Chemical mapping of a 177-nucleotide RNA with 2A3 and DMS.
Values are in units of 0.01, from 0 to 300, in steps of 10.
The 2A3 profile rests on 3,300 reads.
The RNA was probed in 150 mM KOAc, 10 mM MgCl2 and 150 mM bicine (pH 8.5) at 24 C.

RNA sequence: GGGAACGACUCGAGUAGAGUCGAAAAGAUAUGGAUGCAGGACAUGCUGCUGGGUCGGAAACGACCCAACAGCAACAGCCUGGUCCUAAGUCAAACGAAUAGAGCAUCUUCGGAUGCUCUAUUCGAACUAUCUUUUCACCUUCGGGUGAAAAGAUAGAAAAGAAACAACAACAACAAC
Reactivity to 2A3 in 0.01 (KOAc 150mM, MgCl2 10mM, bicine 150mM(pH8.5), 24C), signal-to-noise 2, nucleotides 027 to 126: g030a010u060a000u170g010g020a000u080g300c020a000g050g000a100c050a170u090g000c010u000g000c010u000g000g000g020u000c010g020g060a100a050a050c000g000a020c000c010c010a010a000c000a010g020c000a020a000c020a010g030c000c020u020g020g000u000c010c000u020a140a030g080u060c090a140a050a110c020g000a010a000u030a000g010a000g000c000a000u020c050u100u120c300g050g010a010u000g000c000u010c000u000a000u000u000c000g000a000a000
Reactivity to DMS in 0.01 (KOAc 150mM, MgCl2 10mM, bicine 150mM(pH8.5), 24C), signal-to-noise 2, nucleotides 027 to 126: g000a030u010a300u000g010g020a000u000g020c000a000g000g000a030c090a160u000g000c000u000g010c020u000g000g000g020u000c000g010g000a090a080a150c000g010a010c000c000c000a000a000c000a010g000c000a010a060c190a170g000c000c000u000g010g000u000c000c000u000a050a140g000u000c030a080a100a280c020g000a010a000u000a010g000a000g000c000a010u000c000u000u010c230g010g010a010u000g000c000u000c000u000a000u000u000c000g010a070a180